[RMDB]
RNA sequence: GGGAACGACUCGAGUAGAGUCGAAAAGAUAUGGACGUGUCACGACAUGAACAGUGUCGGAAACGACAUGGGUUCAACAGCGUGCACGUCCUAAGUCAAACAGCUAGCAUCUUCGGAUGCUAGCUGACGGACCUAAUAGCUUCGGCUAUUAGGUCCGAAAAGAAACAACAACAACAAC
Reactivity to 2A3 in 0.01 (KOAc 150mM, MgCl2 10mM, bicine 150mM(pH8.5), 24C), signal-to-noise 2, nucleotides 027 to 126: g000a000u010a000u060g000g000a000c000g000u050g130u300c090a000c000g090a080c180a300u300g000a010a010c000a030g000u010g000u000c010g000g020a010a000a010c000g030a000c000a000u130g240g180g170u050u010c140a300a260c090a300g030c000g010u000g030c010a000c020g000u000c010c000u000a000a000g000u000c010a060a080a060c000a000g020c010u020a000g000c000a000u000c010u060u060c300g140g000a010u010g010c000u000a000g000c000u000g000a000
Reactivity to DMS in 0.01 (KOAc 150mM, MgCl2 10mM, bicine 150mM(pH8.5), 24C), signal-to-noise 1, nucleotides 027 to 126: g000a000u000a150u020g000g000a020c000g000u000g000u040c040a020c000g000a080c140a150u010g000a010a010c000a300g000u000g000u010c010g030g020a040a010a060c030g020a020c000a000u000g000g060g000u020u010c020a100a130c230a120g000c010g000u000g000c000a010c000g000u020c000c000u000a000a080g000u000c010a130a100a300c010a010g010c010u000a000g000c000a060u010c000u000u000c300g030g000a010u000g010c000u000a010g010c000u010g000a070
Background
Chemical mapping of a 177-nucleotide RNA with 2A3 and DMS. The reactions ran in a buffer of 150 mM KOAc, 10 mM MgCl2 and 150 mM bicine (pH 8.5), at 24 C. Reactivities are given for positions 27 through 126. It was measured as part of the RMDB library TTRDES. The DMS profile rests on 1,211 reads. For 2A3 the reverse transcriptase was SuperScript II with manganese.